[RMDB]
RNA sequence: GGGAACGACUCGAGUAGAGUCGAAAAUCUUUGCGCUUCGGCGCAAAGAAAACGCCUGCUGCUCCGUGACCCGUCCGUGAGACCGUCGGUCCAGCCGGCCGAAAACUAUGGUGUUCGCACCAUAGAACGCUAUAAUAUACUUCGGUAUAUUAUAGCGAAAAGAAACAACAACAACAAC
Reactivity to 2A3 in 0.01 (KOAc 150mM, MgCl2 10mM, bicine 150mM(pH8.5), 24C), signal-to-noise 6, nucleotides 027 to 126: u000c000u020u000u020g000c010g010c010u040u080c280g130g000c010g000c010a000a010a000g000a020a040a000a000c030g000c010c000u050g050c010u010g000c010u010c020c010g060u040g090a080c010c020c020g020u010c010c020g180u140g070a200g010a070c020c020g110u080c040g000g010u000c020c000a030g030c010c030g020g000c010c020g110a080a070a010a020c010u000a000u000g000g010u010g030u050u060c220g010c080a000c000c000a000u000a000g010a030a000
Reactivity to DMS in 0.01 (KOAc 150mM, MgCl2 10mM, bicine 150mM(pH8.5), 24C), signal-to-noise 8, nucleotides 027 to 126: u000c000u000u000u000g010c000g020c000u000u010c210g030g020c000g020c010a010a000a010g000a010a030a100a160c190g010c020c010u000g020c020u000g010c030u000c020c030g010u010g000a080c060c050c080g000u000c020c030g010u000g000a150g000a030c030c110g010u000c030g010g010u000c070c030a070g010c060c060g010g010c020c050g000a050a050a080a180c010u000a000u000g000g020u000g010u000u010c210g010c010a010c000c000a010u000a010g010a070a140

This 177-nucleotide RNA was probed chemically with 2A3 and DMS.
For DMS, 13,762 sequencing reads were counted.
The RNA was probed in 150 mM KOAc, 10 mM MgCl2 and 150 mM bicine (pH 8.5) at 24 C.